Chemical mapping of a 207-nucleotide RNA with 2A3.
RNA sequence: GGGAACGACUCGAGUAGAGUCGAAAACCUGUGGUUCGCCACAGGAAAAAAACCUUUGUGGAAUCAAGAGGGAGCUUAUGAAAGGCCCAUUGGGCCUACGCAUAAGCGACGAUCUCUUGAGUUCCACUCUGGUAAAAAAGCGUCUUUCGAGACGCAAGAGUUUAUUGAGUUUCGACUCAAUAAACUCAAAAGAAACAACAACAACAAC
Reactivity to 2A3 in 0.01 (KOAc 150mM, MgCl2 10mM, bicine 150mM(pH8.5), 24C), signal-to-noise 2, nucleotides 027 to 156: c000c000u000g010u010g030g050u030u090c270g080c060c020a030c040a020g000g010a040a090a060a000a000a000a060c020c000u020u000u000g000u000g000g010a010a000u020c000a000a000g000a000g020g000g000a020g020c000u000u010a000u010g020a050a050a060g050g010c050c020c160a300u100u300g020g000g010c000c000u010a030c190g020c000a000u000a000a000g000c000g030a030c000g000a000u000c000u000c020u000u000g020a020g000u020u000c000c000a000c000u000c010u010g000g010u120a110a130a000a000a040a000g020c020g000u030c020u010u150u190c280g040a010g000a000c000g010c010a010a020

The 2A3 profile rests on 1,385 reads.